[RMDB]
RNA sequence: GGGAACGACUCGAGUAGAGUCGAAAAGAUAUGGACGAGAUGAGAGCGAUAAGCUGACAUCGGAAACGAUGUUCAGCUUUUGACGCUCUGAGUCCUAAGUCAAAAGAUUACCGUUCGCGGUAAUCAAGUCCUACACAUGCUUCGGCAUGUGUAGGACAAAAGAAACAACAACAACAAC
Reactivity to DMS in 0.01 (KOAc 150mM, MgCl2 10mM, bicine 150mM(pH8.5), 24C), signal-to-noise 2, nucleotides 027 to 126: g020a040u010a240u000g000g010a010c000g020a200g010a220u000g010a050g010a000g010c000g000a150u000a010a020g010c000u000g000a000c000a000u000c000g000g000a110a050a120c000g000a010u000g000u010u010c000a000g000c000u000u000u000u000g000a180c020g010c000u000c000u010g000a140g010u000c000c000u000a050a140g020u000c020a110a090a090a120g000a000u000u000a000c010c000g020u000u030c270g060c000g000g010u000a000a010u000c000a100a100
Reactivity to 2A3 in 0.01 (KOAc 150mM, MgCl2 10mM, bicine 150mM(pH8.5), 24C), signal-to-noise 1, nucleotides 027 to 126: g010a020u030a070u160g000g000a020c040g020a040g020a300u300g050a050g000a010g120c070g090a090u020a220a040g040c020u000g000a000c000a000u000c020g040g000a030a020a000c000g000a000u020g010u090u050c030a030g000c000u010u000u010u010g020a000c000g040c000u050c000u000g030a010g020u000c000c010u000a100a000g050u080c080a090a000a000a140g020a000u000u020a000c030c000g010u030u050c300g000c010g140g000u000a000a000u030c000a000a010

This 177-nucleotide RNA was probed chemically with DMS and 2A3. For 2A3 the reverse transcriptase was SuperScript II with manganese. Reactivities are rounded to 0.1 and cut off at 0 and 3. The RNA was probed in 150 mM KOAc, 10 mM MgCl2 and 150 mM bicine (pH 8.5) at 24 C.